[RMDB]
RNA sequence: GGGAACGACUCGAGUAGAGUCGAAAAGGUGCUCUGAAUUGAGUGCUCUACUGAGAUUAUAAAAUAGAAGGUAAGCUAUUAUCUCUUACAACAGGGCAGGGCUUGUUGGAAUAGGCGGUAAAGUCUAAAAACUACCUCACCUUCGGGUGAGGUAGAAGGAUUAGUCAUAGUUCGCUAUGACUAAUCCAAAAGAAACAACAACAACAAC
Reactivity to DMS in 0.01 (KOAc 150mM, MgCl2 10mM, bicine 150mM(pH8.5), 24C), signal-to-noise 2, nucleotides 027 to 156: g000g000u020g020c020u000c020u000g020a180a160u000u000g030a040g020u000g000c010u000c060u010a040c070u000g020a090g030a110u010u000a180u020a080a100a070a110u010a090g020a090a180g030g010u000a060a110g030c060u030a080u000u010a030u010c010u000c020u000u000a120c060a030a160c020a090g030g010g050c000a070g000g010g020c040u020u020g020u020u000g010g010a040a140u000a030g030g010c050g030g030u010a060a080a130g020u010c060u020a030a060a060a140a190c000u000a020c010c010u000c000a010c000c000u000u010c300g050g050g030u000g020a010g030g010u000a000g010a000a090
Reactivity to 2A3 in 0.01 (KOAc 150mM, MgCl2 10mM, bicine 150mM(pH8.5), 24C), signal-to-noise 4, nucleotides 027 to 156: g020g010u030g010c000u010c000u060g170a200a140u180u050g010a040g010u040g010c010u030c030u090a080c020u040g020a020g020a060u070u130a110u250a200a080a100a040u110a050g050a090a040g110g050u110a050a030g030c020u030a060u100u050a020u100c020u000c010u050u090a040c030a120a030c020a060g010g020g000c010a010g000g020g000c020u020u020g010u010u010g010g010a080a050u060a030g030g000c050g000g040u110a070a080a010g010u000c020u070a050a020a000a050a050c000u000a000c000c000u010c000a000c010c000u030u040c160g050g000g000u000g000a010g000g000u000a000g000a000a000